The data come from the RNA Mapping Database (RMDB), library OK3TST. An RNA of 207 nucleotides, treated with DMS and 2A3 and read out base by base. For 2A3, 1,859 sequencing reads were counted. Values cover nucleotides 27 to 156. Conditions: 150 mM KOAc, 10 mM MgCl2 and 150 mM bicine (pH 8.5), 24 C.
RNA sequence: GGGAACGACUCGAGUAGAGUCGAAAAUGCUUACCCAAUCCAAGUUAAACUUGGAUCUGGCCUUAGCUUUGACAGUACAGGAGCCAUAAUGGCUGGUAACAAAGAAGACGAUAAACUCACUUUGUGGACAACACCUGAUCCAUCACCAAACUGUCAACCUCAGGCUAAAAUUCGUUUUAGCCUGAGGAAAAGAAACAACAACAACAAC
Reactivity to DMS in 0.01 (KOAc 150mM, MgCl2 10mM, bicine 150mM(pH8.5), 24C), signal-to-noise 1, nucleotides 027 to 156: u000g030c070u000u000a170c070c040c010a060a040u000c000c000a050a000g010u000u000a060a110a300c010u000u010g000g000a000u010c010u020g010g000c020c030u000u030a020g030c020u000u000u000g000a080c010a000g030u000a170c080a060g000g050a100g030c000c050a090u010a110a170u000g000g010c060u000g010g050u000a140a080c020a010a090a030g000a050a130g030a060c120g000a170u030a070a100a240c150u000c040a170c050u000u000u000g040u000g000g010a100c030a110a060c030a050c030c020u000g000a170u000c010c030a160u010c010a060c030c040a110a050a090c000u000g020u000c020a060a120
Reactivity to 2A3 in 0.01 (KOAc 150mM, MgCl2 10mM, bicine 150mM(pH8.5), 24C), signal-to-noise 4, nucleotides 027 to 156: u080g010c000u030u030a020c000c000c000a000a000u000c000c000a000a000g040u070u150a300a140a160c010u000u000g010g000a000u030c110u030g020g000c010c070u050u080a030g000c000u090u010u060g020a020c000a010g010u080a020c000a020g040g020a030g020c050c010a080u110a260a090u300g010g000c010u020g030g040u060a110a000c020a020a020a020g050a070a040g020a040c130g020a060u170a210a140a060c020u020c040a060c040u090u010u040g030u010g020g050a030c020a090a030c000a100c010c000u010g010a070u100c020c020a050u100c020a030c080c000a050a110a040c030u020g030u040c020a020a020